Conditions: 150 mM KOAc, 10 mM MgCl2 and 150 mM bicine (pH 8.5), 24 C.
The record gives the reactivity of an RNA of 177 nucleotides to 2A3 and DMS.
2A3 is a SHAPE reagent: it acylates the 2'-hydroxyl of flexible nucleotides of all four kinds.
The DMS profile rests on 59,536 reads.
In probing experiments dimethyl sulfate is read out at A N1 and C N3, which are open when not base-paired.
Values cover nucleotides 27 to 126.
RNA sequence: GGGAACGACUCGAGUAGAGUCGAAAAUCAAGAGUACAACUGGAAACUAUGAUUGUACUCGGAGUAAAUCAUAGUCGACGAAGUCGAUUACAUGUUACUCAUCUGUCAUGUAAUCCAGUUGACAGAAGAUAGUAUGCACAUUCGUGUGUAUACUAUCAAAAGAAACAACAACAACAAC
Reactivity to 2A3 in 0.01 (KOAc 150mM, MgCl2 10mM, bicine 150mM(pH8.5), 24C), signal-to-noise 9, nucleotides 027 to 126: u110c030a040a030g040a020g050u080a100c000a000a000c000u000g010g010a010a010a000c020u030a020u030g020a060u000u020g070u070a030c030u010c060g010g000a010g000u020a010a020a010u080c020a010u030a020g010u000c000g010a010c060g260a210a020g020u010c000g000a010u000u010a020c020a020u110g020u030u040a010c000u010c030a090u030c040u040g020u010c000a000u010g010u050a030a000u000c000c000a000g000u000u010g010a010c020a010g080a060a010
Reactivity to DMS in 0.01 (KOAc 150mM, MgCl2 10mM, bicine 150mM(pH8.5), 24C), signal-to-noise 9, nucleotides 027 to 126: u030c070a110a090g010a110g020u010a050c000a000a000c010u000g000g000a000a140a090c110u050a020u010g000a040u000u000g000u020a030c090u020c180g000g000a070g000u000a020a010a010u010c210a100u000a010g010u000c000g000a010c010g010a130a110g010u000c000g010a150u000u000a010c080a030u010g000u010u010a010c020u010c090a150u030c080u010g000u000c000a010u000g000u000a060a000u010c010c010a030g010u000u000g000a030c020a090g010a080a090